Structure probing data (2A3) for a 170-nucleotide construct. The 2A3 profile rests on 5,734 reads.
[RMDB]
RNA sequence: GGGAACGACUCGAGUAGAGUCGAAAAGCUUCACUCAUAUUAGCUCGUAAACAUGGCACUUGUUGUACUACAAGGGACAGAUUUUAUCGCUUGGCAAAUGAGUGUGCUCAGGUGCUAAGCGAAUAUGGCACGGGGGUGUUCGCACCCCCGAAAAGAAACAACAACAACAAC
Reactivity to 2A3 in 0.01 (KOAc 150mM, MgCl2 10mM, bicine 150mM(pH8.5), 24C), signal-to-noise 4, nucleotides 027 to 129: g050c050u090u050c010a030c060u070c040a040u080a110u170u160a020g000c030u030c130g090u110a000a130a000c050a240u120g010g000c030a000c050u030u040g000u010u090g070u210a080c030u060a030c020a040a030g030g000g020a030c000a020g070a050u030u020u020u080a090u060c000g020c010u000u010g000g010c000a010a010a040u000g000a000g030u220g090u130g130c010u010c000a010g000g000u000g020c000u010a010a000g000c000g020a000a020u070a070u090g090g000c050a020